[RMDB]
The record gives the reactivity of an RNA of 207 nucleotides to 2A3. The RNA was probed in 150 mM KOAc, 10 mM MgCl2 and 150 mM bicine (pH 8.5) at 24 C.
RNA sequence: GGGAACGACUCGAGUAGAGUCGAAAAAACAUUGAUCGGGUGCACAAAAAGGGAAUGGCUUCGAUACCGUAAUUAUAGGCGAAUCCUAGAUCGAAUGACGCAAAGUGUGCUACGAUAAUAUCAUCGCCAAUAAAAUCAGACAAACCAUCCAUUGCGGCUGAGCGGUGUAAUUCGUUACACCGCUCAGAAAAGAAACAACAACAACAAC
Reactivity to 2A3 in 0.01 (KOAc 150mM, MgCl2 10mM, bicine 150mM(pH8.5), 24C), signal-to-noise 1, nucleotides 027 to 156: a000a000c090a040u060u110g050a050u000c010g000g000g000u000g000c020a010c000a090a060a060a050a010g090g000g030a120a000u140g000g030c080u010u010c070g050a040u020a240c000c080g020u090a150a000u250u040a080u060a040g000g010c040g040a050a020u040c010c010u000a090g060a140u050c010g000a100a200u110g000a080c010g040c040a040a080a040g010u040g000u000g050c000u050a120c020g010a000u040a040a010u150a270u170c000a010u040c020g030c000c000a010a150u120a070a090a010a040u090c000a000g080a060c070a040a160a000c000c060a080u070c010c000a010u000u050g040c010g000g080